Conditions: 150 mM KOAc, 10 mM MgCl2 and 150 mM bicine (pH 8.5), 24 C. Chemical mapping of a 177-nucleotide RNA with DMS.
[RMDB]
RNA sequence: GGGAACGACUCGAGUAGAGUCGAAAACACCGGCGGUUAACGCCCUGGAAAAAGACGGCAAGGUGUUGACCGAUUCUGAACAGGUCGGGCAGUGGGGCGCGCCAACGCUGGACGUCUGGGUGGUGCGAAGACAGAGCGGGUUCGCCCGCUCUGUCUUAAAAGAAACAACAACAACAAC
Reactivity to DMS in 0.01 (KOAc 150mM, MgCl2 10mM, bicine 150mM(pH8.5), 24C), signal-to-noise 2, nucleotides 027 to 126: c130a180c080c040g010g020c020g000g010u010u000a030a050c050g000c010c000c010u000g010g000a110a050a080a090a050g010a060c150g000g000c010a110a080g030g030u000g010u000u010g000a080c020c010g010a100u010u010c010u000g010a080a140c180a070g010g010u000c000g030g020g010c050a060g010u000g010g000g000g000c080g000c000g020c010c030a070a070c080g010c070u000g000g010a110c100g000u010c010u000g000g000g020u000g020g020u000g000c080g010